The record gives the reactivity of an RNA of 207 nucleotides to 2A3 and DMS. The reactions ran in a buffer of 150 mM KOAc, 10 mM MgCl2 and 150 mM bicine (pH 8.5), at 24 C. For 2A3 the reverse transcriptase was SuperScript II with manganese. Source: RMDB library RNAMAK, as collected in RNAgym.
[RMDB]
RNA sequence: GGGAACGACUCGAGUAGAGUCGAAAAGCGUACUACCGAGCCAGCGAAAUGUGCACGCUACCCACCAGUGCUCCCAAAUAGGAGCACUGAGGCGUGCGAAUCGCUGGAACUACUCGGUAUCGCAAAAGUAGGUGUUACGGUUCGCCGUAACACCUACCGGAAGUAACCUCUUCGGAGGUUACUUCCGAAAAGAAACAACAACAACAAC
Reactivity to 2A3 in 0.01 (KOAc 150mM, MgCl2 10mM, bicine 150mM(pH8.5), 24C), signal-to-noise 2, nucleotides 027 to 156: g020c020g010u050a070c040u000a010c040c000g000a010g000c000c000a020g000c010g130a080a120a130u300g070u210g000c010a000c000g040c000u100a150c050c090c000a040c010c010a000g000u010g000c000u070c020c010c000a120a300a150u250a140g000g000a000g000c000a000c000u000g000a000g000g000c000g000u000g020c020g010a050a050u000c000g000c000u030g000g010a000a000c030u280a050c000u030c000g010g000u000a010u090c030g000c000a000a080a080a000g000u000a000g000g000u000g000u000u000a000c000g000g070u030u030c230g060c060c000g000u010a020a020c000a000c000c000u000a000c000
Reactivity to DMS in 0.01 (KOAc 150mM, MgCl2 10mM, bicine 150mM(pH8.5), 24C), signal-to-noise 1, nucleotides 027 to 156: g030c000g030u010a100c070u000a000c000c000g020a030g020c000c010a020g000c060g000a000a100a120u020g070u020g000c000a080c020g000c000u000a040c010c000c000a300c100c010a030g050u010g060c000u000c000c010c050a130a210a300u030a040g000g020a040g020c000a000c000u000g040a050g020g020c000g030u000g020c000g120a180a200u030c020g030c000u000g020g000a000a040c010u000a280c020u010c000g010g000u000a030u000c010g090c000a010a080a130a050g090u000a000g000g010u000g000u000u000a000c000g000g020u000u000c300g000c020c000g060u000a000a050c000a000c000c000u000a000c000